[RMDB]
RNA sequence: GGGAACGACUCGAGUAGAGUCGAAAAAGAGCCGGAUACGUCCGGCUCAACGGGGGAUACGUGUGGUGCCGGCCGCUCCCCCUAUGGCAUAACAAAUGCACCACACACUAGGCUACGGCCUAGUGAAAAAAGGUGUAUGUGUUCGCACAUACACCAAGUCAUUUGUAAUCUUCGGAUUACAAAUGACAAAAGAAACAACAACAACAAC
Reactivity to 2A3 in 0.01 (KOAc 150mM, MgCl2 10mM, bicine 150mM(pH8.5), 24C), signal-to-noise 2, nucleotides 027 to 156: a000g000a000g000c010c000g010g000a010u030a080c150g110u010c010c000g000g000c000u000c000a000a000c010g000g000g000g000g040a030u080a220c040g030u030g000u000g010g000u000g030c020c050g100g000c020c010g030c030u080c000c000c000c000c000u000a090u100g060g000c040a070u070a300a080c060a060a090a010u140g010c000a000c000c000a000c000a000c000a000c000u000a000g010g000c010u010a000c270g080g000c000c000u000a000g000u040g020a150a000a000a000a000a010g010g010u000g000u000a000u000g010u000g010u030u050c230g010c090a000c000a000u000a000c000a000c000c000a010a000

The record gives the reactivity of an RNA of 207 nucleotides to 2A3. The reactions ran in a buffer of 150 mM KOAc, 10 mM MgCl2 and 150 mM bicine (pH 8.5), at 24 C. Reactivities are given for positions 27 through 156. For 2A3, 1,762 sequencing reads were counted. It was measured as part of the RMDB library M2RFPK.